The record gives the reactivity of an RNA of 207 nucleotides to 2A3 and DMS.
RNA sequence: GGGAACGACUCGAGUAGAGUCGAAAAGUAGAAUGUGGAGGAUAUUCUUGGAUAGAGACUACUGAAAUAAUGGACAUCAAGAAAUUGGAAUUUACCAGAAGAGAAAGGCUGAAUCCUGAUGGUACCCAGAGGAACACUUGUCUCAUCGAGAAAGAGAGUGCACGAUACUAUUCGUAGUAUCGUGCACAAAAGAAACAACAACAACAAC
Reactivity to 2A3 in 0.01 (KOAc 150mM, MgCl2 10mM, bicine 150mM(pH8.5), 24C), signal-to-noise 3, nucleotides 027 to 156: g030u060a020g010a180a110u070g010u040g030g020a000g030g000a030u000a040u060u030c020u040u040g070g010a030u060a100g040a020g010a050c020u040a010c040u070g030a060a080a020u100a030a020u060g010g030a020c010a020u040c030a050a030g060a080a080a050u130u090g020g010a030a030u030u050u050a100c020c030a020g030a100a010g220a080g010a230a070a000g060g000c030u040g030a040a030u020c010c010u030g000a030u060g020g000u030a070c010c010c000a040g030a020g010g030a020a070c030a010c060u030u030g040u030c010u000c020a090u070c050g040a060g050a020a050a030g110a000g020a060
Reactivity to DMS in 0.01 (KOAc 150mM, MgCl2 10mM, bicine 150mM(pH8.5), 24C), signal-to-noise 1, nucleotides 027 to 156: g010u020a080g010a070a060u010g030u030g010g000a050g000g000a140u100a030u000u000c020u010u000g020g010a130u000a170g030a180g000a100c010u000a250c090u010g030a020a040a110u000a080a100u010g010g010a120c050a070u000c040a030a130g010a030a100a030u000u000g000g010a100a040u010u000u000a060c030c000a160g020a150a070g030a070g000a100a150a150g010g000c060u000g020a080a130u000c010c030u000g000a080u000g010g000u000a050c040c060c030a110g000a120g040g000a100a080c030a030c080u010u000g000u000c010u010c040a030u000c050g000a090g020a140a100a060g030a110g000a230
The DMS profile rests on 1,882 reads. The RNA was probed in 150 mM KOAc, 10 mM MgCl2 and 150 mM bicine (pH 8.5) at 24 C. The 2A3 profile rests on 1,753 reads.